[RMDB]
RNA sequence: GGGAACGACUCGAGUAGAGUCGAAAAACGCUCUCAAGGACCUCAACCUCGACCUCAGCCCCCAGGAUGGACAUCGAGGACUCCACGAGAAUUGACACUGGGACCGGCUCGGGAACAGAUGACACUAUCGUCCUUUUACGUUCGCGUAAAAGGACGAAAAAGAAACAACAACAACAAC
Reactivity to DMS in 0.01 (KOAc 150mM, MgCl2 10mM, bicine 150mM(pH8.5), 24C), signal-to-noise 1, nucleotides 027 to 126: a050c070g060c050u000c000u000c030a120a300g040g000a050c120c070u000c050a030a100c010c000u000c000g010a050c060c000u030c040a020g000c070c040c020c020c010a070g030g000a090u000g010g000a060c130a170u010c100g020a100g080g010a100c130u000c050c020a030c260g020a080g020a110a050u000u010g000a200c100a100c000u020g000g000g000a100c110c040g000g020c160u010c020g030g000g000a140a220c070a050g020a130u000g000a020c180a060c150u030a060